[RMDB]
RNA sequence: GGGAACGACUCGAGUAGAGUCGAAAAGGCCGGCGCGAUUAAAUCCAUGUUCUCCGGCGAGAAGAUCAACCGCACCGAAGACCGCGCCGUGCUGCACGUGGCGCUGCGUAACCGUAGCAAUACGCCGCAUCGAGUCACCUUUCGAGGUGACUCGAUGAAAAGAAACAACAACAACAAC
Reactivity to DMS in 0.01 (KOAc 150mM, MgCl2 10mM, bicine 150mM(pH8.5), 24C), signal-to-noise 2, nucleotides 027 to 126: g000g080c000c000g000g050c050g030c040g020a090u020u070a070a110a060u040c150c110a090u050g090u000u000c000u000c000c010g000g030c060g000a060g010a130a020g060a060u020c300a050a080c090c010g000c110a160c100c090g000a020a020g050a030c160c000g000c000g010c000c020g020u030g040c000u000g040c110a190c000g050u000g000g000c150g000c000u000g040c000g000u030a090a150c300c080g000u000a020g050c010a090a300u140a080c030g000c040c010g020
Reactivity to 2A3 in 0.01 (KOAc 150mM, MgCl2 10mM, bicine 150mM(pH8.5), 24C), signal-to-noise 2, nucleotides 027 to 126: g010g000c000c000g050g020c000g000c000g030a020u120u230a070a120a130u170c160c070a090u130g110u170u040c020u010c000c000g000g030c080g010a070g020a020a040g090a090u180c080a050a110c040c000g020c020a040c030c020g020a020a000g040a020c010c010g000c010g000c020c000g010u100g020c020u040g030c100a070c060g010u010g010g000c010g000c000u010g000c000g030u060a100a000c110c020g020u000a040g020c000a000a000u070a040c000g010c020c020g000